[RMDB]
RNA sequence: GGGAACGACUCGAGUAGAGUCGAAAACUGCUGACGCUUCUUUAGUGUUCUUAGAGGUAGACAGUGUGAGCUUGCCGGAUGGGACACUGCGAUUUAAUGCACGAAGUGGAAUCACCGAACAGCGUGCUGGCUAAAUUGUGUUCGCACAAUUUAGCCAAAAAGAAACAACAACAACAAC
Reactivity to 2A3 in 0.01 (KOAc 150mM, MgCl2 10mM, bicine 150mM(pH8.5), 24C), signal-to-noise 2, nucleotides 027 to 126: c020u040g000c060u030g070a030c000g010c010u020u050c050u070u250u170a010g000u010g030u050u000c000u000u080a060g050a060g140g010u040a050g030a090c010a060g020u020g110u100g150a090g000c040u020u080g010c020c010g110g000a080u090g060g000g030a000c020a000c010u020g000c000g020a020u050u080u250a130a010u190g030c020a000c070g010a020a020g010u030g000g060a070a040u030c030a060c050c020g070a150a020c000a010g020c000g090u030g030c030
Reactivity to DMS in 0.01 (KOAc 150mM, MgCl2 10mM, bicine 150mM(pH8.5), 24C), signal-to-noise 2, nucleotides 027 to 126: c020u010g010c020u000g060a110c040g000c050u000u000c010u010u010u000a050g020u010g020u000u000c030u000u000a120g020a150g000g010u000a020g040a040c050a060g020u000g030u010g090a140g020c000u010u010g060c060c020g010g000a110u020g000g010g000a020c030a020c020u010g010c090g000a080u000u020u010a090a100u000g010c060a110c170g000a050a030g000u010g010g000a100a150u000c070a140c040c040g010a070a130c120a030g010c020g000u000g010c140